Chemical mapping of a 170-nucleotide RNA with DMS and 2A3. The data come from the RNA Mapping Database (RMDB), library 15KLIB. Reactivities are given for positions 27 through 129.
RNA sequence: GGGAACGACUCGAGUAGAGUCGAAAAGAAGGAGCUCUCGAGCGCUCUCCCGCCCCUCGGAUGGGCCGCUUCCGGCGAACGAGCCCGAAGAGCGAGUGGGGGAGAACUCCCGAGAGUUGGGAGACAGGAGGCUCUAAGUUCGCUUAGAGCAAAAGAAACAACAACAACAAC
Reactivity to DMS in 0.01 (KOAc 150mM, MgCl2 10mM, bicine 150mM(pH8.5), 24C), signal-to-noise 9, nucleotides 027 to 129: g000a050a050g010g020a070g010c000u000c010u010c040g000a040g000c300g000c020u020c010u020c010c020c020g030c020c000c120c000u000c010g020g000a270u050g020g000g010c010c010g030c160u040u030c050c090g040g000c090g000a060a120c020g010a130g010c000c000c000g000a300a130g000a010g030c130g010a050g040u000g020g000g010g020g020a010g020a050a030c020u010c020c060c000g010a040g030a070g030u040u020g000g020g000a050g010a090c040a040g000g000a090g020
Reactivity to 2A3 in 0.01 (KOAc 150mM, MgCl2 10mM, bicine 150mM(pH8.5), 24C), signal-to-noise 9, nucleotides 027 to 129: g040a010a020g020g040a010g000c000u000c010u020c030g010a010g000c060g000c010u010c000u000c000c000c000g050c000c010c000c000u000c000g060g050a120u170g090g010g000c000c000g010c010u100u050c030c050g140g020c080g020a040a030c020g010a040g010c000c000c000g020a040a020g010a000g050c090g010a030g000u030g000g000g000g000g000a000g000a010a010c010u030c020c020c000g040a050g000a010g050u080u070g020g000g000a060g000a010c030a040g030g050a040g070